[RMDB]
RNA sequence: GGGAACGACUCGAGUAGAGUCGAAAAAGCCACUUCGGUGGCUCGUCGCGGGGUCGAGAAUUCGCCUGUGAGACAUGCUCUGAAGCCUCCACGGAGCAACAGCUCACAGACAGCGAAGUCUCGACGGAGGCACCCCACGCUAAAGGUUCGCCUUUAAGAUUCUAUUUGCUUUCGAGCAAAUAGAAUCAAAAGAAACAACAACAACAAC
Reactivity to 2A3 in 0.01 (KOAc 150mM, MgCl2 10mM, bicine 150mM(pH8.5), 24C), signal-to-noise 2, nucleotides 027 to 156: a000g010c010c000a010c010u040u100c210g160g000u000g000g000c000u030c120g100u070c030g010c040g000g060g040g030u000c000g010a000g000a010a060u010u000c010g000c000c010u000g000u010g000a000g030a030c070a070u080g000c000u030c000u000g150a210a080g040c010c040u060c060c020a030c040g000g000a010g040c020a030a070c060a040g080c010u000c000a010c010a030g050a080c100a020g000c010g000a010a000g020u000c000u000c000g010a010c010g020g000a010g020g000c000a040c000c000c020c010a020c030g080c060u170a080a030a040g050g020u020u050c070g170c070c000u010u090u130a170a020
This 207-nucleotide RNA was probed chemically with 2A3. Reactivities are given for positions 27 through 156. The reactions ran in a buffer of 150 mM KOAc, 10 mM MgCl2 and 150 mM bicine (pH 8.5), at 24 C. For 2A3 the reverse transcriptase was SuperScript II with manganese.